[RMDB]
RNA sequence: GGGAACGACUCGAGUAGAGUCGAAAAACUCUUCUUCAUGAUGGGGAGACAAGUGCUGGACAGGGCUGGAAAGAAAGAAGCCAAUAGCCCACUCAGCCAUUGGCCUUGCAAGCUCUUGAGGCUUGGAUUUCCUGCAAAAUGUGACAGUGUGACAGAGAGUUGAGUCGAAAUUCGUUUCGACUCAACUAAAAGAAACAACAACAACAAC
Reactivity to 2A3 in 0.01 (KOAc 150mM, MgCl2 10mM, bicine 150mM(pH8.5), 24C), signal-to-noise 1, nucleotides 027 to 156: a000c040u000c000u070u040c030u190u090c030a100u140g140a110u140g040g000g040g030a030g000a010c050a050a030g010u090g120c020u060g000g030a060c040a030g060g020g010c000u020g060g050a150a090a000g090a050a160a020g070a140a000g040c000c000a000a060u020a030g000c000c020c050a070c040u080c010a010g000c000c000a000u010u010g010g000c000c010u020u030g040c040a020a000g010c010u030c000u100u240g130a150g040g000c000u030u000g020g000a020u000u000u060c020c000u020g030c050a030a060a060a160u090g050u050g020a050c030a030g040u000g000u020g220a030c030a010g110a040g010
Conditions: 150 mM KOAc, 10 mM MgCl2 and 150 mM bicine (pH 8.5), 24 C. Structure probing data (2A3) for a 207-nucleotide construct. Values are in units of 0.01, from 0 to 300, in steps of 10. It was measured as part of the RMDB library OK3TST. For 2A3 the reverse transcriptase was SuperScript II with manganese.